This 177-nucleotide RNA was probed chemically with 2A3 and DMS. Reactivities are rounded to 0.1 and cut off at 0 and 3. 2A3 adducts were read by reverse transcription with SuperScript II with manganese. For 2A3, 1,228 sequencing reads were counted. The RNA was probed in 150 mM KOAc, 10 mM MgCl2 and 150 mM bicine (pH 8.5) at 24 C.

[RMDB]
RNA sequence: GGGAACGACUCGAGUAGAGUCGAAAAUCUGGCGGUGUGGCUAAAGAGUUCAACACUAUUGCGGUGGAUGAUGGGAUCGCGAUGGGCCACGGCGGCAUGCUCUAUUCACUGCCUUCACGUGAAUUGAUCACCAGAACACAUUCGUGUGUUCUGGUGAAAAAGAAACAACAACAACAAC
Reactivity to 2A3 in 0.01 (KOAc 150mM, MgCl2 10mM, bicine 150mM(pH8.5), 24C), signal-to-noise 1, nucleotides 027 to 126: u030c030u020g020g010c050g120g140u010g000u040g040g000c020u100a200a200a000g110a030g010u120u090c070a110a080c050a050c090u080a030u050u120g000c020g000g000u040g030g120a100u130g050a070u090g050g120g060a020u030c010g000c010g070a050u040g000g070g000c000c060a000c000g050g010c000g030g030c010a060u030g040c000u030c000u040a060u060u010c020a000c040u020g050c030c000u090u210c080a060c140g070u030g010a050a070u000u050g000a020
Reactivity to DMS in 0.01 (KOAc 150mM, MgCl2 10mM, bicine 150mM(pH8.5), 24C), signal-to-noise 2, nucleotides 027 to 126: u010c100u010g000g000c010g000g020u000g030u000g000g010c040u010a040a120a060g010a090g000u010u000c120a050a100c140a140c060u000a090u000u010g000c090g000g010u000g000g000a080u030g020a040u000g020g000g000a070u000c020g030c020g000a090u010g030g000g020c000c030a060c100g000g010c060g000g010c060a060u030g040c060u010c060u010a100u000u000c020a010c020u000g020c080c100u000u000c120a070c220g000u010g030a030a050u000u000g000a250